[RMDB]
Background:
Conditions: 150 mM KOAc, 10 mM MgCl2 and 150 mM bicine (pH 8.5), 24 C. The record gives the reactivity of an RNA of 207 nucleotides to DMS and 2A3. It was measured as part of the RMDB library M2RFPK. For DMS the reverse transcriptase was MarathonRT.
RNA sequence: GGGAACGACUCGAGUAGAGUCGAAAAGCCGUAGCCGACAACAUGCCCAGGUAGCCCAGACCUUCAAGGCUACGGUGCGUUGCGACGCACGGUCUGAUUCUUCACAACGACGUUCACCGCGUCUUCUACAACCGGCAAAGAUUCGUCUUUGCCGGAAACAUUGAGAGAAGUUCGCUUCUCUCAAUGUAAAAGAAACAACAACAACAAC
Reactivity to DMS in 0.01 (KOAc 150mM, MgCl2 10mM, bicine 150mM(pH8.5), 24C), signal-to-noise 3, nucleotides 027 to 156: g000c000c010g030u000a070g030c010c040g040a140c060a080a090c060a090u000g010c010c010c130a120g030g030u010a080g030c050c020c040a150g000a090c050c030u000u000c080a080a160g020g010c000u000a010c030g020g010u000g010c070g030u020u000g010c040g010a110c050g010c070a030c020g010g010u010c020u010g010a170u000u010c090u000u000c050a090c080a040a160c060g020a080c010g000u000u000c070a050c050c060g010c040g030u000c010u000u000c030u020a080c120a110a200c010c010g020g010c010a020a010a010g030a100u000u010c290g000u000c000u000u000u000g010c020c000g010g000a000a030
Reactivity to 2A3 in 0.01 (KOAc 150mM, MgCl2 10mM, bicine 150mM(pH8.5), 24C), signal-to-noise 9, nucleotides 027 to 156: g020c000c000g020u010a010g010c020c010g100a130c050a100a020c030a120u210g030c030c030c020a040g080g030u010a020g010c000c020c020a060g050a130c030c050u160u120c100a080a060g000g000c000u010a000c000g000g010u010g000c030g010u020u030g030c080g040a020c030g010c020a020c040g010g020u040c060u070g040a100u090u030c040u090u100c070a050c030a210a110c090g030a010c010g030u080u120c070a080c200c020g000c020g030u020c050u050u020c030u070a090c030a120a080c020c000g000g000c010a010a000a010g010a010u070u140c180g050u000c110u000u000u000g000c000c000g010g000a000a000